Chemical mapping of a 177-nucleotide RNA with 2A3 and DMS. Conditions: 150 mM KOAc, 10 mM MgCl2 and 150 mM bicine (pH 8.5), 24 C.
[RMDB]
RNA sequence: GGGAACGACUCGAGUAGAGUCGAAAAGGCACUGACAAGCUCGUGCUGUUGGGAAUCGCCAACCAUGACGGCGACGGCGGGUCUUGGCCGAGCAUUGCGACCCUAGCCCGGUAUGCCAACGUAGAGCAUUGUCACAUCGUUUCGACGAUGUGACAAUAAAAGAAACAACAACAACAAC
Reactivity to 2A3 in 0.01 (KOAc 150mM, MgCl2 10mM, bicine 150mM(pH8.5), 24C), signal-to-noise 2, nucleotides 027 to 126: g050g000c030a010c070u060g030a080c010a030a060g030c000u010c040g080u140g040c070u090g040u080u070g050g010g040a060a170u060c060g000c000c000a010a040c050c050a100u190g090a050c100g020g050c010g040a030c020g030g020c000g000g050g010u030c020u050u210g020g000c020c020g010a010g000c080a210u030u250g050c040g010a060c000c000c030u010a040g030c000c010c020g000g000u160a110u130g060c000c030a030a050c070g040u090a050g000a000g060c030
Reactivity to DMS in 0.01 (KOAc 150mM, MgCl2 10mM, bicine 150mM(pH8.5), 24C), signal-to-noise 3, nucleotides 027 to 126: g010g000c050a060c080u010g010a090c070a070a100g020c020u000c030g040u000g000c010u000g020u000u000g010g010g010a070a130u010c040g030c020c000a130a130c140c110a080u000g010a110c220g010g020c020g010a060c150g000g030c020g010g020g010u000c000u010u000g000g020c010c010g010a080g000c080a110u000u020g010c000g010a060c050c010c030u000a150g000c020c010c030g000g010u010a050u000g010c030c040a080a090c050g000u010a120g000a070g010c080